[RMDB]
RNA sequence: GGGAACGACUCGAGUAGAGUCGAAAAAUUAUAUAGCCGGCCGGCUAGCGCAUAUUACGCGCGUACGAUAUGCCGAUCGGCAUGCCGAUUACGGCGCUAGCGCAUGCUAGCCGAUGCUAUAUAGCUACACUCCUAUCCUAUUCGUAGGAUAGGAGUGAAAAGAAACAACAACAACAAC
Reactivity to DMS in 0.01 (KOAc 150mM, MgCl2 10mM, bicine 150mM(pH8.5), 24C), signal-to-noise 4, nucleotides 027 to 126: a080u000u000a010u000a010u000a020g000c000c020g000g010c010c020g000g000c010u000a300g000c000g000c030a130u000a180u000u000a080c110g010c000g010c000g000u000a030c040g000a020u000a010u000g000c000c000g010a140u020c220g010g010c010a010u000g000c020c000g000a130u000u010a020c000g010g030c000g000c050u000a080g020c010g020c010a290u000g010c010u000a040g010c000c000g000a150u010g010c000u000a020u000a020u000a020g010c170u020a130
Reactivity to 2A3 in 0.01 (KOAc 150mM, MgCl2 10mM, bicine 150mM(pH8.5), 24C), signal-to-noise 4, nucleotides 027 to 126: a010u070u030a000u010a000u000a010g000c000c010g020g020c010c030g000g010c010u040a140g000c030g000c040a020u150a130u270u250a110c090g020c000g010c010g000u000a000c000g010a020u000a010u060g000c020c040g200a300u210c150g030g000c000a000u000g020c000c010g130a150u120u090a030c090g150g010c000g030c040u030a030g000c000g000c000a030u060g000c000u000a000g000c000c000g030a030u090g000c000u000a010u000a000u000a010g010c010u070a040
The record gives the reactivity of an RNA of 177 nucleotides to DMS and 2A3. DMS adducts were read by reverse transcription with MarathonRT. High DMS reactivity at an A or C suggests that its Watson-Crick edge is free. Reactivities are rounded to 0.1 and cut off at 0 and 3. Conditions: 150 mM KOAc, 10 mM MgCl2 and 150 mM bicine (pH 8.5), 24 C. Source: RMDB library OK2TRN, as collected in RNAgym. The 2A3 profile rests on 6,406 reads.